[RMDB]
RNA sequence: GGGAACGACUCGAGUAGAGUCGAAAACGGAAUAGCGAUGUAGUCCUUGAAUCGGCCCGGCACGGGUUUGUACAAAUUGUGCACCGCACCUAACACUCGAUAGCAGGUGUCCACCGAAUCGACGAUGCCAGGUAGCCUUAUUCGUAAGGCUACCUGGAAAAGAAACAACAACAACAAC
Reactivity to DMS in 0.01 (KOAc 150mM, MgCl2 10mM, bicine 150mM(pH8.5), 24C), signal-to-noise 1, nucleotides 027 to 126: c000g000g000a040a070u010a090g000c030g000a000u000g050u000a130g000u000c040c060u000u000g000a160a010u010c080g010g000c040c020c070g000g050c090a090c090g000g000g030u000u000u000g020u000a030c020a080a080a120u010u030g010u000g000c020a050c100c060g020c020a090c010c010u010a100a180c120a120c110u000c100g020a090u000a030g000c080a030g010g020u010g020u010c050c030a050c070c010g010a200a090u000c080g000a070c090g010a070u000g030
Reactivity to 2A3 in 0.01 (KOAc 150mM, MgCl2 10mM, bicine 150mM(pH8.5), 24C), signal-to-noise 1, nucleotides 027 to 126: c070g030g030a180a040u080a080g010c040g010a000u080g020u090a020g080u060c000c000u020u020g050a080a100u110c050g080g000c080c080c010g070g000c010a000c040g010g000g010u020u050u190g070u000a060c110a040a300a130u160u040g050u010g000c030a000c050c010g050c010a070c030c000u070a070a030c000a050c150u020c010g050a070u060a080g030c100a030g010g000u020g060u050c030c060a010c000c010g040a030a020u020c020g130a070c180g020a050u070g050
An RNA of 177 nucleotides, treated with DMS and 2A3 and read out base by base.
The RNA was probed in 150 mM KOAc, 10 mM MgCl2 and 150 mM bicine (pH 8.5) at 24 C.
2A3 adducts were read by reverse transcription with SuperScript II with manganese.
Reactivities are given for positions 27 through 126.
It was measured as part of the RMDB library OK2TST.